Chemical mapping of a 177-nucleotide RNA with 2A3. Conditions: 150 mM KOAc, 10 mM MgCl2 and 150 mM bicine (pH 8.5), 24 C. The data come from the RNA Mapping Database (RMDB), library OK1LIB. The 2A3 profile rests on 354 reads.

[RMDB]
RNA sequence: GGGAACGACUCGAGUAGAGUCGAAAAGGCGUGCGCCUCUCUGACACUUGCAGAUGCUGAAUAUUUGCUGGGGCGUUACUCUAUCUUGGCGAGCUGUGUACUCGAGAGCCUGGAAAAACUGGCCGCCAAUCGGUUCAGUCUUCGGACUGAACCGAUUAAAAGAAACAACAACAACAAC
Reactivity to 2A3 in 0.01 (KOAc 150mM, MgCl2 10mM, bicine 150mM(pH8.5), 24C), signal-to-noise 1, nucleotides 027 to 126: g050g000c130g050u070g000c000g000c030c030u110c060u000c070u070g060a160c040a020c050u010u160g000c040a000g000a280u010g060c060u190g070a180a000u160a090u050u050u050g050c000u000g000g030g090g050c000g090u060u090a000c060u070c010u030a140u160c020u090u050g020g000c000g030a040g000c000u000g110u050g050u110a010c000u140c070g020a000g020a000g050c000c070u150g000g000a000a300a000a000a000c040u060g000g000c000c000g010c000c000